[RMDB]
RNA sequence: GGGAACGACUCGAGUAGAGUCGAAAAGAUAUGGAGUUGUAUGGAGCAGAAAUUCGGAAACGAAUUUACCUGCUAUGAAGUACACCUCCUAAGUCAAAACUAAGUAAAUCUUCGGAUUUACUUAGAACACGAAUAGUCACUUCGGUGACUAUUCGUGAAAAGAAACAACAACAACAAC
Reactivity to DMS in 0.01 (KOAc 150mM, MgCl2 10mM, bicine 150mM(pH8.5), 24C), signal-to-noise 1, nucleotides 027 to 126: g010a000u000a010u020g000g000a000g000u000u000g000u000a010u010g000g000a000g000c000a000g000a040a010a010u000u000c010g010g000a010a010a000c010g010a020a000u000u000u000a010c300c020u000g010c000u000a240u020g000a110a210g010u000a020c010a010c040c000u000c010c000u000a000a020g010u000c000a080a030a060a150c000u000a000a000g000u000a000a000a000u000c000u000u010c280g020g010a020u000u000u000a000c000u000u000a000g000a110a090